[RMDB]
RNA sequence: GGGAACGACUCGAGUAGAGUCGAAAAAUUUGCACGUCAAUCGCUUCGACGACGGUCAGGGCUUCUUCGGCAGGGAACUUGUGGGCAAUCGCCCAGCGCGGCGCGCGGGAGAUGAAGCCGAGUUCGCAUCACCACGCUGAUUCGUCAGCGUGGUGAUAAAAGAAACAACAACAACAAC
Reactivity to DMS in 0.01 (KOAc 150mM, MgCl2 10mM, bicine 150mM(pH8.5), 24C), signal-to-noise 1, nucleotides 027 to 126: a060u040u000u000g010c010a020c200g000u000c040a030a100u010c130g020c100u000u010c110g000a060c070g000a040c040g040g000u000c060a000g000g000g000c050u040u000c040u000u000c040g010g000c090a120g000g000g000a010a040c120u000u000g030u040g000g000g000c000a170a180u000c080g020c000c000c020a100g000c000g050c050g000g040c250g020c000g000c030g010g000g000a090g000a020u010g000a110a140g000c000c000g040a050g000u040u000c060g010c120
Reactivity to 2A3 in 0.01 (KOAc 150mM, MgCl2 10mM, bicine 150mM(pH8.5), 24C), signal-to-noise 2, nucleotides 027 to 126: a000u080u090u090g030c030a010c000g070u050c030a010a060u060c070g040c120u120u090c040g040a040c100g000a020c010g070g060u080c080a070g030g060g000c000u040u010c000u100u080c000g010g000c010a030g100g020g000a000a030c060u060u050g100u240g050g020g010c000a000a120u100c070g030c000c000c000a130g020c040g010c000g200g070c120g020c000g000c000g050g000g020a050g020a050u110g100a070a010g000c000c000g000a010g010u010u090c030g000c100
An RNA of 177 nucleotides, treated with DMS and 2A3 and read out base by base. For DMS the reverse transcriptase was MarathonRT. The 2A3 profile rests on 980 reads. Reactivities are given for positions 27 through 126. It was measured as part of the RMDB library OK1LIB.